[RMDB]
RNA sequence: GGGAACGACUCGAGUAGAGUCGAAAACAGAGCUAAUGAGCCACAUACCUACCCAAGGUGAAAGCUCCUUCUCUCGCAAUGUGUAACUCAUGAUUCUCAUCACCCCUGGUUGGAGAGAUCCGGACUAUAGACUAGAGGGUGUUCGCACCCUCUAGAAUCAACGAACAUGGUUCGCCAUGUUCGUUGAAAAAGAAACAACAACAACAAC
Reactivity to 2A3 in 0.01 (KOAc 150mM, MgCl2 10mM, bicine 150mM(pH8.5), 24C), signal-to-noise 1, nucleotides 027 to 156: c030a010g030a000g050c030u080a070a080u110g010a010g070c050c000a030c020a050u140a070c020c000u050a130c000c020c010a040a030g070g000u070g030a150a020a000g010c040u060c080c000u090u020c010u020c020u000c110g080c130a100a120u050g050u030g040u100a070a020c010u040c080a010u090g030a070u230u020c030u000c020a030u130c030a110c000c000c020c010u040g070g000u050u050g040g000a060g020a030g000a020u020c020c020g070g000a000c070u070a060u100a300g030a070c000u020a000g000a000g000g000g030u000g010u030u060c100g030c070a000c000c000c050u050c000u000a000g000a000a000
Reactivity to DMS in 0.01 (KOAc 150mM, MgCl2 10mM, bicine 150mM(pH8.5), 24C), signal-to-noise 1, nucleotides 027 to 156: c030a070g000a080g020c130u000a180a140u030g000a070g030c050c040a050c040a150u000a070c030c020u020a080c070c040c030a130a200g030g020u050g030a030a090a120g020c050u000c010c040u000u000c020u010c020u010c000g010c040a160a050u010g000u010g000u000a110a020c020u000c010a020u000g010a090u010u010c000u020c010a120u000c080a160c010c030c020c030u010g010g000u000u000g030g030a130g050a100g000a100u010c040c040g040g020a130c030u000a100u020a110g010a240c010u000a030g000a040g060g000g040u000g000u000u010c280g010c030a010c000c000c020u000c010u000a000g010a030a110
Source: RMDB library M2RFPK, as collected in RNAgym. An RNA of 207 nucleotides, treated with 2A3 and DMS and read out base by base. DMS adducts were read by reverse transcription with MarathonRT. For 2A3, 752 sequencing reads were counted. Values cover nucleotides 27 to 156.